[RMDB]
RNA sequence: GGGAACGACUCGAGUAGAGUCGAAAACUCAACUGAUAAUGCCCUGGGCGAAAGUCCCCGGGCCUAGGAUAGAAAGUAUCAAGGUGUAAAAAGUGUGCACAAAACACCCACCACCCCUGUGGUGGGUCUCAUGUCACUGUUUCGACAGUGACAUGAGAAAAGAAACAACAACAACAAC
Reactivity to DMS in 0.01 (KOAc 150mM, MgCl2 10mM, bicine 150mM(pH8.5), 24C), signal-to-noise 2, nucleotides 027 to 126: c010u030c010a200a100c080u020g010a020u050a070a140u010g000c000c000c000u000g000g000g000c040g010a050a050a260g010u010c010c000c000c040g000g000g000c000c020u000a030g010g000a090u020a040g030a120a090a150g020u000a020u010c030a060a080g000g000u000g000u020a050a030a040a070a130g000u060g000u000g010c060a050c060a040a080a030a120c300a140c000c000c040a000c000c000a010c020c180c160c300u020g000u020g000g020u000g000g030g000u030
Reactivity to 2A3 in 0.01 (KOAc 150mM, MgCl2 10mM, bicine 150mM(pH8.5), 24C), signal-to-noise 6, nucleotides 027 to 126: c040u010c030a050a040c040u090g080a070u060a230a040u170g000c000c010c000u010g000g020g010c080g110a260a060a070g150u270c000c000c020c010g000g000g000c000c000u010a000g030g010a010u030a040g130a090a250a020g080u050a040u090c070a090a060g110g010u050g010u090a100a120a070a030a060g130u180g040u070g070c040a000c010a010a060a080a010c080a020c000c000c000a020c000c000a000c010c090c010c100u130g010u010g000g000u000g000g000g010u000